Chemical mapping of a 177-nucleotide RNA with DMS and 2A3. For DMS, 1,273 sequencing reads were counted. Source: RMDB library OK1LIB, as collected in RNAgym. The 2A3 profile rests on 1,364 reads. 2A3 adducts were read by reverse transcription with SuperScript II with manganese. The reactions ran in a buffer of 150 mM KOAc, 10 mM MgCl2 and 150 mM bicine (pH 8.5), at 24 C.
[RMDB]
RNA sequence: GGGAACGACUCGAGUAGAGUCGAAAAGAAGAGAAGCGCGCGAAUUGGAAACCAGCGAACCAUAUUACGCGCGCAAGGAACCGGGCCUUGGUUCAUUGGAAAGAAUAGAUAAUGUCGCUGGUAAAGAACUAAUUACGGCGUUCGCGCCGUAAUUAGUAAAAGAAACAACAACAACAAC
Reactivity to DMS in 0.01 (KOAc 150mM, MgCl2 10mM, bicine 150mM(pH8.5), 24C), signal-to-noise 1, nucleotides 027 to 126: g010a250a180g000a200g000a250a200g030c000g000c000g080c000g010a030a030u000u000g000g000a300a030a150c000c000a020g020c020g000a010a180c020c030a000u040a000u000u000a100c000g090c000g000c000g000c000a040a000g000g000a030a040c020c000g020g000g020c040c040u000u010g010g000u000u010c000a080u000u030g000g070a000a100a130g010a120a180u010a150g000a030u000a100a070u070g000u010c000g040c000u030g000g030u000a130a110a150g000a080
Reactivity to 2A3 in 0.01 (KOAc 150mM, MgCl2 10mM, bicine 150mM(pH8.5), 24C), signal-to-noise 3, nucleotides 027 to 126: g100a030a050g040a000g030a290a000g000c010g000c000g000c000g000a010a030u040u000g000g040a050a130a200c000c000a010g000c000g000a000a030c010c010a000u020a030u250u080a110c000g030c020g000c000g000c000a000a010g080g000a010a010c000c060g010g140g030c050c080u150u190g000g000u040u000c010a050u040u140g010g080a160a090a000g060a100a090u130a080g050a080u190a170a110u160g080u100c000g000c000u000g000g000u000a000a060a000g010a010